[RMDB]
RNA sequence: GGGAACGACUCGAGUAGAGUCGAAAAGAGCGAUUUAAUAUUAGAUCGUCGCGAUCUAAAUAGUCCGACACGCUGUCGCGGGGCAGCACCUCCCGGGAAAGGGCCCUUGGUGCGAAUUCGAAAGAAACGCUAAAUAGGGAUUCGUCCCUAUUUAGCGAAAAGAAACAACAACAACAAC
Reactivity to DMS in 0.01 (KOAc 150mM, MgCl2 10mM, bicine 150mM(pH8.5), 24C), signal-to-noise 3, nucleotides 027 to 126: g020a140g020c010g020a060u000u000u000a110a120u010a180u010u000a020g010a000u000c020g030u010c200g010c130g020a030u000c010u000a010a030a100u000a060g000u000c030c030g010a070c090a110c140g020c070u000g010u000c060g010c090g000g010g000g000c050a060g010c010a090c060c010u000c010c000c010g010g000g020a040a090a120g010g000g020c060c020c040u000u000g020g010u000g010c040g010a080a130u010u000c030g000a090a090a150g010a040a070a170
Reactivity to 2A3 in 0.01 (KOAc 150mM, MgCl2 10mM, bicine 150mM(pH8.5), 24C), signal-to-noise 1, nucleotides 027 to 126: g120a020g020c010g000a030u000u050u260a170a100u200a200u160u060a030g010a010u040c020g130u070c050g070c100g130a000u020c000u000a100a050a050u060a080g040u000c030c020g000a020c010a000c130g050c060u040g020u090c010g000c050g060g000g000g000c030a050g030c000a010c000c010u040c000c010c000g010g040g030a080a080a020g050g000g000c000c000c000u020u050g080g000u020g020c010g030a030a120u160u170c050g040a040a070a020g090a070a080a010